[RMDB]
RNA sequence: GGGAACGACUCGAGUAGAGUCGAAAAACAGCGAAAGGCACAAGACUUCGAACAUUCUAGCAGUUAGUAGUUGCCUAAACCCAUUGCAAUAUAUGGGACAGUAGAGGUCGCAAGCCUAUACUGUGCGAAAAGUCGCAAGGUUUCGACCUUGCGACAAGACGGGUAAUCGUUUCGACGAUUACCCGUCAAAAGAAACAACAACAACAAC
Reactivity to 2A3 in 0.01 (KOAc 150mM, MgCl2 10mM, bicine 150mM(pH8.5), 24C), signal-to-noise 1, nucleotides 027 to 156: a000c050a000g010c020g120a100a120a000g010g000c020a030c000a010a070g050a050c020u040u000c040g110a130a160c060a260u090u210c130u220a030g020c050a060g050u070u100a020g050u130a000g040u150u010g050c000c000u020a050a070a070c010c000c000a000u000u000g000c040a070a000u010a000u020a000u190g020g010g000a000c010a000g020u000a000g000a000g030g010u080c020g120c300a000a000g040c000c000u010a020u000a000c000u000g000u030g030c000g010a180a000a000a060g000u000c000g000c000a000a000g030g030u040u080u100c210g060a050c030c000u000u070g000c000g000a000c000a000a000
Chemical mapping of a 207-nucleotide RNA with 2A3. Conditions: 150 mM KOAc, 10 mM MgCl2 and 150 mM bicine (pH 8.5), 24 C. The 2A3 profile rests on 465 reads. For 2A3 the reverse transcriptase was SuperScript II with manganese. Source: RMDB library M2RFPK, as collected in RNAgym.